Structure probing data (2A3 and DMS) for a 207-nucleotide construct. It was measured as part of the RMDB library M2RFPK. For 2A3, 2,391 sequencing reads were counted. For DMS the reverse transcriptase was MarathonRT. For 2A3 the reverse transcriptase was SuperScript II with manganese.

[RMDB]
RNA sequence: GGGAACGACUCGAGUAGAGUCGAAAAGAAACUCGUUUCGCGUUGGCUGCCUAAUUCAAGGAAUUAGCGUGCCUUCAUGCUAAGGGUUUGAUAUCUGCUAAAACCCGGUGCAUUCAUCUAUGCAGGUCUCAUCCAAAUGCCUUCGGGCAUUUGGAAAAGAGAUUCAUGGAUUCGUCCAUGAAUCUCUAAAAGAAACAACAACAACAAC
Reactivity to 2A3 in 0.01 (KOAc 150mM, MgCl2 10mM, bicine 150mM(pH8.5), 24C), signal-to-noise 3, nucleotides 027 to 156: g070a020a060a010c040u010c040g070u050u120u070c080g020c020g010u000u030g010g010c030u090g040c010c040u030a020a020u020u000c150a240a110g160g040a090a020u010u010a020g010c050g040u020g000c010c000u020u010c040a050u050g010c000u000a010a030g000g000g000u010u000u030g010a020u020a030u000c010u000g000c000u010a010a020a050a070c000c000c040g010g030u040g020c040a070u060u190c030a090u090c110u200a120u240g010c000a010g010g020u020c030u040c070a050u010c000c000a020a000a000u000g000c010c010u040u080c160g050g000g000c000a000u000u000u000g000g000a030a010a000
Reactivity to DMS in 0.01 (KOAc 150mM, MgCl2 10mM, bicine 150mM(pH8.5), 24C), signal-to-noise 1, nucleotides 027 to 156: g030a050a060a080c020u000c030g030u000u000u000c070g000c060g030u010u010g020g000c030u000g000c110c000u000a030a010u000u010c030a120a150g000g000a080a040u010u000a020g000c040g030u000g040c000c000u010u000c040a080u000g030c000u020a260a170g000g020g000u000u020u000g000a200u000a050u050c060u000g040c100u000a160a060a050a060c010c000c020g000g050u000g000c000a060u000u010c070a070u000c060u000a140u000g010c030a080g010g010u000c060u010c030a140u000c000c010a020a010a000u000g000c000c000u000u000c300g070g050g000c000a000u000u000u000g000g000a010a000a060